Source: RMDB library M2RFPK, as collected in RNAgym.
Chemical mapping of a 207-nucleotide RNA with DMS and 2A3.
RNA sequence: GGGAACGACUCGAGUAGAGUCGAAAAACGAUGCGGAAGUUCGCGCUUCCGUGAAACGCGAAAAUCGGACGGUGGCUGCAAGUCGCAUCGCAAAACCGCGGCAAGUGGAGUUAGCGAGAGGAGGCUGAAACCAUCCAACACUUCGGUGUUGGAUGAAUAUCUCGAUAGAGUUCGCUCUAUCGAGAUAAAAAGAAACAACAACAACAAC
Reactivity to DMS in 0.01 (KOAc 150mM, MgCl2 10mM, bicine 150mM(pH8.5), 24C), signal-to-noise 2, nucleotides 027 to 156: a090c020g030a100u000g010c000g020g000a050a050g040u000u000c160g050c200g000c010u010u000c000c080g000u010g030a070a060a060c050g010c030g000a070a050a100a160u000c020g010g010a060c040g030g030u000g020g020c060u010g010c050a090a100g020u010c030g000c010a180u000c020g000c010a040a040a120a110c010c060g000c050g030g000c020a060a100g000u000g020g010a100g000u000u000a150g000c040g000a080g010a110g030g000a060g010g010c030u000g010a090a100a140c140c010a000u000c010c000a000a000c000a000c000u000u000c300g060g020u010g000u000u010g000g000a000u000g000a020a100
Reactivity to 2A3 in 0.01 (KOAc 150mM, MgCl2 10mM, bicine 150mM(pH8.5), 24C), signal-to-noise 3, nucleotides 027 to 156: a010c040g010a000u060g000c000g020g010a040a020g030u070u150c060g020c000g000c060u020u010c000c010g000u000g030a100a100a010c070g020c020g110a050a050a000a110u100c030g040g050a030c050g050g030u020g010g030c060u110g010c110a000a060g030u080c000g020c020a020u030c010g000c020a030a070a030a010c060c040g000c020g040g030c060a050a070g020u070g040g050a040g030u070u100a040g060c020g010a010g010a010g060g040a020g030g000c020u040g040a090a000a010c030c010a000u000c000c000a000a000c010a000c000u040u120c210g100g000u000g000u000u000g000g010a000u000g000a000a000

For DMS, 3,324 sequencing reads were counted. For DMS the reverse transcriptase was MarathonRT.